[RMDB]
This 207-nucleotide RNA was probed chemically with 2A3. 2A3 adducts were read by reverse transcription with SuperScript II with manganese. High 2A3 reactivity points to a flexible backbone, as in loops and unpaired stretches.

RNA sequence: GGGAACGACUCGAGUAGAGUCGAAAAUCUUCUUCGAUUCGGACCGGCUCAUCUCGACAAGAGGCGGCAGUCCUCAGUGCUCUUACUCUUUUCUGUAAAGAGGAGACUCCUGGACUCGCCGCCCAAGUUCGAGCAUGGGCCAAUUCCGAGCGAAGAGCGAAGGUAUUUUCUUCGGAAAAUACCUUCGAAAAGAAACAACAACAACAAC
Reactivity to 2A3 in 0.01 (KOAc 150mM, MgCl2 10mM, bicine 150mM(pH8.5), 24C), signal-to-noise 1, nucleotides 027 to 156: u010c010u040u010c000u010u000c070g130a190u080u000c000g030g000a040c060c120g020g000c010u020c000a010u000c000u000c010g000a010c020a090a130g080a240g020g010c010g000g000c010a000g010u000c000c000u000c030a060g000u010g070c030u010c010u040u230a300c000u110c020u060u130u130u140c190u230g300u300a050a000a000g000a000g000g000a020g000a010c010u030c010c050u030g000g000a000c010u010c070g000c000c010g020c000c000c000a000a010g000u040u020c010g000a010g000c060a010u000g010g000g000c000c000a000a010u000u000c010c000g000a010g000c000g010a000a010g000a010g020